Background:
This 177-nucleotide RNA was probed chemically with DMS and 2A3. The 2A3 profile rests on 1,466 reads. The reactions ran in a buffer of 150 mM KOAc, 10 mM MgCl2 and 150 mM bicine (pH 8.5), at 24 C. The data come from the RNA Mapping Database (RMDB), library OK2TRN. For DMS, 1,403 sequencing reads were counted. DMS (dimethyl sulfate) methylates the pairing face of unpaired adenines and cytosines.

[RMDB]
RNA sequence: GGGAACGACUCGAGUAGAGUCGAAAAAUAAGCUGCGAUAAGCUCUGAGUAGGCGCAAAUAGCCAGUGAUCCAGAGAUUUCCGAAUGGGGAAACCCACAUACUUAACGGUAUGUACCAUAAAUUGAAACUCUGUAGGAUUUUCGAAUCCUACAGAGUAAAAGAAACAACAACAACAAC
Reactivity to DMS in 0.01 (KOAc 150mM, MgCl2 10mM, bicine 150mM(pH8.5), 24C), signal-to-noise 2, nucleotides 027 to 126: a080u000a130a070g010c090u010g030c090g000a060u000a060a100g000c010u010c030u000g000a080g010u000a070g010g010c000g020c100a070a100a160u000a150g000c010c010a230g010u010g010a010u000c050c010a030g000a080g010a040u010u000u000c020c000g030a080a070u000g010g000g010g010a130a050a110c020c000c010a090c000a010u000a000c000u000u010a070a160c270g000g000u000a000u000g010u000a100c100c070a030u030a060a070a120u000u000g000a190a090
Reactivity to 2A3 in 0.01 (KOAc 150mM, MgCl2 10mM, bicine 150mM(pH8.5), 24C), signal-to-noise 2, nucleotides 027 to 126: a000u140a070a030g080c060u050g000c060g070a040u030a200a030g060c030u010c000u020g060a060g010u030a030g050g000c000g000c100a040a090a230u190a090g010c000c010a230g280u010g000a010u000c000c000a000g010a010g020a030u030u060u000c060c040g030a110a070u070g000g000g020g040a020a030a040c000c030c000a000c000a010u030a010c030u070u140a070a000c040g020g000u030a010u010g010u040a040c000c030a060u090a200a160a100u070u140g080a130a090